An RNA of 177 nucleotides, treated with DMS and 2A3 and read out base by base.
RNA sequence: GGGAACGACUCGAGUAGAGUCGAAAAUAACAUCGUAGAGUAAGACGAAAAGUCAACGUCGCUUGCCAGCAGGACCACCAAAGGAAUACGCUUCGGUAACUACUCGAGAUCCCAAGCGAUAACACAAACCUAGGAGAACUUUCGAGUUCUCCUAGGUAAAAGAAACAACAACAACAAC
Reactivity to DMS in 0.01 (KOAc 150mM, MgCl2 10mM, bicine 150mM(pH8.5), 24C), signal-to-noise 1, nucleotides 027 to 126: u020a030a070c070a050u000c090g000u010a100g010a060g010u000a110a080g000a000c000g030a090a070a110a110g000u000c080a050a060c080g020u000c020g020c080u000u000g020c040c020a030g000c050a070g000g010a130c000c010a070c050c090a090a090a050g000g000a100a080u010a080c050g020c060u000u000c000g000g000u000a110a110c010u000a010c000u000c010g000a050g000a090u010c010c000c010a070a050g000c060g010a090u000a010a060c120a060c150a060a050
Reactivity to 2A3 in 0.01 (KOAc 150mM, MgCl2 10mM, bicine 150mM(pH8.5), 24C), signal-to-noise 1, nucleotides 027 to 126: u070a020a000c030a060u060c030g030u020a020g020a050g100u070a080a040g030a020c000g070a150a080a120a000g080u060c050a010a010c010g060u020c010g000c090u040u030g000c010c010a030g040c030a010g000g040a060c020c000a020c000c060a090a050a000g030g030a070a070u060a050c030g010c050u000u040c010g010g000u030a120a270c000u000a000c000u000c000g000a010g000a070u020c000c000c000a000a010g050c050g180a140u130a220a000c030a000c050a120a110